[RMDB]
RNA sequence: GGGAACGACUCGAGUAGAGUCGAAAACGCUGGGCGAUGUGGUAAGACAGCUGCGUACUGAAGCGCGCACGGUACCAGCAAUGACGCGUAACAUCAUCGCCUGUGCUGAAGCGCGCACGGCAACCGAAAGGUGCGAGACCCGUCCUUCGGGACGGAAGUGAUCUAAAUUUUUCGAAAUUUAGAUCACAAAAGAAACAACAACAACAAC
Reactivity to DMS in 0.01 (KOAc 150mM, MgCl2 10mM, bicine 150mM(pH8.5), 24C), signal-to-noise 2, nucleotides 027 to 156: c090g000c030u010g020g030g010c010g000a010u000g060u000g020g050u020a080a120g040a170c080a150g000c020u000g000c150g020u000a110c060u000g000a050a080g010c030g020c020g020c000a290c000g010g000u000a040c000c010a040g020c000a080a100u000g020a120c180g040c080g010u000a100a130c040a100u020c000a030u000c000g020c000c000u020g040u000g020c010u000g020a090a110g010c010g020c010g010c000a080c000g000g030c060a090a110c010c020g030a090a130a170g010g020u010g010c090g000a190g000a070c120c000c010g000u000c010c010u000u010c300g040g010g010a010c010g000g000a020a030
Reactivity to 2A3 in 0.01 (KOAc 150mM, MgCl2 10mM, bicine 150mM(pH8.5), 24C), signal-to-noise 8, nucleotides 027 to 156: c050g000c010u020g000g000g010c000g020a010u000g050u060g050g200u210a160a060g100a070c040a050g010c020u020g010c090g030u010a010c000u020g070a240a050g000c000g000c000g000c000a030c040g000g000u000a000c000c010a000g010c070a040a120u220g050a060c100g050c070g200u160a110a070c040a090u150c000a000u000c000g000c000c010u030g040u040g000c040u110g030a060a010g000c000g000c000g020c000a010c000g080g010c030a110a130c000c010g060a070a030a040g010g000u040g010c010g020a050g050a060c020c010c000g000u000c010c000u050u130c250g070g000g000a010c000g000g010a040a030